[RMDB]
RNA sequence: GGGAACGACUCGAGUAGAGUCGAAAACCGAAUGGACCGGGCAACACGCGGGCUACAAUGGCUCUGACAGUGGGAUGCAACGCCGAGAGGCGACGCUAAUCUCCAAACGGAGUCGUAGUUCGGAUUGAGCUUGAACCUACUUCGGUAGGUUCAAGCUAAAAGAAACAACAACAACAAC
Reactivity to DMS in 0.01 (KOAc 150mM, MgCl2 10mM, bicine 150mM(pH8.5), 24C), signal-to-noise 1, nucleotides 027 to 126: c000c000g050a090a110u010g080g010a010c040c060g010g030g000c000a030a080c150a000c300g000c010g000g000g000c050u000a040c000a250a070u130g020g110c000u000c000u000g000a130c150a110g000u000g000g000g000a030u000g000c000a100a300c010g000c000c000g010a300g000a280g030g000c130g000a000c300g000c030u040a000a010u000c030u000c000c000a050a200a150c050g010g000a000g000u000c000g000u000a000g000u000u080c050g000g040a110u040u000g000
Reactivity to 2A3 in 0.01 (KOAc 150mM, MgCl2 10mM, bicine 150mM(pH8.5), 24C), signal-to-noise 1, nucleotides 027 to 126: c000c000g010a020a160u220g060g030a000c000c060g000g060g000c020a010a020c090a030c040g060c020g000g020g000c000u000a000c010a120a270u220g000g000c000u040c020u040g050a040c040a050g000u300g120g040g010a000u000g000c020a040a000c010g000c000c000g020a050g000a010g060g000c010g010a010c040g000c000u050a100a000u000c000u000c000c000a000a060a130c060g020g000a000g010u000c000g000u000a030g000u030u000c020g000g020a100u020u180g050
This 177-nucleotide RNA was probed chemically with DMS and 2A3. For DMS the reverse transcriptase was MarathonRT. DMS (dimethyl sulfate) methylates the pairing face of unpaired adenines and cytosines. Values cover nucleotides 27 to 126. The reactions ran in a buffer of 150 mM KOAc, 10 mM MgCl2 and 150 mM bicine (pH 8.5), at 24 C. The 2A3 profile rests on 801 reads.